[RMDB]
RNA sequence: GGGAACGACUCGAGUAGAGUCGAAAACGGCUUGGUCAGCACAAAGUCCCCGAUGCGUCCGUGGGCAAGGUAGUGCACGUCGGAUCCGCAGAUGCCCACGCUGUCCAUGGCCAGGAGAACCUCUGAGCAGGAGAAAGCAAUAUGAAAGCUAUUAGAAAAAAUUUAGUCAGUUCGCUGACUAAAUUUUAAAAGAAACAACAACAACAAC
Reactivity to 2A3 in 0.01 (KOAc 150mM, MgCl2 10mM, bicine 150mM(pH8.5), 24C), signal-to-noise 2, nucleotides 027 to 156: c030g020g000c000u000u050g020g020u040c000a030g000c070a070c060a130a090a010g060u070c000c020c020c000g040a040u090g020c020g090u000c020c010g000u010g010g000g000c040a030a050g050g050u110a100g100u050g110c070a050c040g090u090c030g150g020a070u050c030c000g000c020a000g050a130u100g000c000c000c000a030c040g000c000u040g000u020c020c000a030u040g080g000c020c020a020g020g020a070g010a070a030c020c000u010c050u090g040a030g000c030a010g010g030a050g020a130a150a000g020c000a010a010u090a060u300g030a060a050a050g020c010u070a080u140u240a140g230a050a070
Reactivity to DMS in 0.01 (KOAc 150mM, MgCl2 10mM, bicine 150mM(pH8.5), 24C), signal-to-noise 1, nucleotides 027 to 156: c050g020g040c030u030u010g000g000u010c030a130g080c030a170c080a070a060a080g020u010c010c020c030c010g020a050u000g080c040g020u000c020c020g080u010g010g000g040c000a030a070g020g010u000a080g040u000g040c020a060c060g020u000c030g070g010a130u000c070c040g040c060a110g020a170u020g030c000c000c000a110c070g000c010u010g010u000c050c070a020u000g000g050c000c010a110g010g000a090g000a090a090c050c000u000c000u030g050a090g030c040a100g020g000a120g000a070a100a120g000c010a100a110u010a140u000g010a110a100a150g000c050u000a050u000u010a140g030a000a100
An RNA of 207 nucleotides, treated with 2A3 and DMS and read out base by base. The DMS profile rests on 1,756 reads. For 2A3 the reverse transcriptase was SuperScript II with manganese. The data come from the RNA Mapping Database (RMDB), library OK3TST. For DMS the reverse transcriptase was MarathonRT. The reactions ran in a buffer of 150 mM KOAc, 10 mM MgCl2 and 150 mM bicine (pH 8.5), at 24 C.